Structure probing data (2A3 and DMS) for a 177-nucleotide construct. 2A3 is a SHAPE reagent: it acylates the 2'-hydroxyl of flexible nucleotides of all four kinds. For 2A3 the reverse transcriptase was SuperScript II with manganese. The data come from the RNA Mapping Database (RMDB), libraries RFM100 and RFMREP.
RNA sequence: GGGAACGACUCGAGUAGAGUCGAAAAUCACAUUUUUGGCAAAGGGAGCGAUAUUUGGGAUUGGAGCGAAUAAGUUGGCAAAAAGGAGUAAAGUUACAUAAUCUAGAAACUUCGGUACCGUGUAUAUGGUACCGUACUUUUUCGAAAGUACGGUACCAAAAGAAACAACAACAACAAC
Reactivity to 2A3 in 0.01 (KOAc 150mM, MgCl2 10mM, bicine 150mM(pH8.5), 24C), signal-to-noise 6, nucleotides 027 to 126: u050c000a010c020a080u040u050u060u070u110g060g000c050a050a030a020g040g030g000a040g000c060g030a030u020a120u140u090u090g020g010g010a010u020u080g030g010a070g020c020g000a020a000u060a060a010g060u050u060g020g020c040a020a020a030a050a040g050g040a020g010u090a040a060a030g020u080u050a050c040a090u150a120a070u080c050u040a020g070a030a080a000c030u030u020c020g040g010u040a050c010c010g030u030g060u040a020u020a010u240
Reactivity to DMS in 0.01 (KOAc 150mM, MgCl2 10mM, bicine 150mM(pH8.5), 24C), signal-to-noise 6, nucleotides 027 to 126: u020c090a080c120a240u010u010u010u010u010g000g000c080a050a090a090g000g010g000a030g010c060g010a040u020a050u010u010u010g000g000g010a070u010u000g010g010a060g000c040g000a090a060u010a040a090g010u010u000g000g010c090a040a050a060a060a040g000g010a050g000u010a050a050a060g000u010u010a080c100a050u030a060a050u020c060u010a080g000a100a090a060c030u010u000c050g000g010u010a040c060c050g000u010g020u010a060u010a070u000